Structure probing data (2A3 and DMS) for a 177-nucleotide construct.
The data come from the RNA Mapping Database (RMDB), library OK1LIB.
For DMS, 1,995 sequencing reads were counted.
The 2A3 profile rests on 2,437 reads.
Values cover nucleotides 27 to 126.
RNA sequence: GGGAACGACUCGAGUAGAGUCGAAAAGCUAGCAAGUGGUGCCGAUGCGCGCUAAGGCACCACAGCCACCGAUGACCUGUAAGGUGGCAAACAGGUCAGCUAAGAAAAGCGCGCACGCGAAAGCGGAAGCCUACUGACGAUUCGUCGUCAGUAGGCUAAAAGAAACAACAACAACAAC
Reactivity to 2A3 in 0.01 (KOAc 150mM, MgCl2 10mM, bicine 150mM(pH8.5), 24C), signal-to-noise 3, nucleotides 027 to 126: g080c060u170a000g080c050a300a020g000u010g000g000u000g000c000c020g010a040u140g000c010g000c000g000c000u020a020a020g050g000c000a000c000c000a000c000a000g000c000c010a060c030c020g170a180u190g050a030c000c000u010g020u090a060a060g020g000u030g050g000c000a000a000a030c030a020g030g040u090c030a010g020c050u080a130a040g080a150a130a020a000g020c000g000c020g000c010a000c000g000c000g010a090a020a020g000c030g000g090a020
Reactivity to DMS in 0.01 (KOAc 150mM, MgCl2 10mM, bicine 150mM(pH8.5), 24C), signal-to-noise 1, nucleotides 027 to 126: g000c000u010a070g020c060a130a110g000u030g000g020u000g000c000c010g000a080u000g020c000g000c000g010c020u000a210a180g020g000c000a010c010c000a000c030a020g030c030c000a100c070c030g050a280u020g020a020c020c000u030g000u000a110a100g000g000u060g000g010c020a030a170a140c120a020g000g000u000c000a080g000c140u000a190a190g060a060a030a110a040g000c050g040c010g000c000a030c030g000c000g010a020a100a140g040c010g000g000a150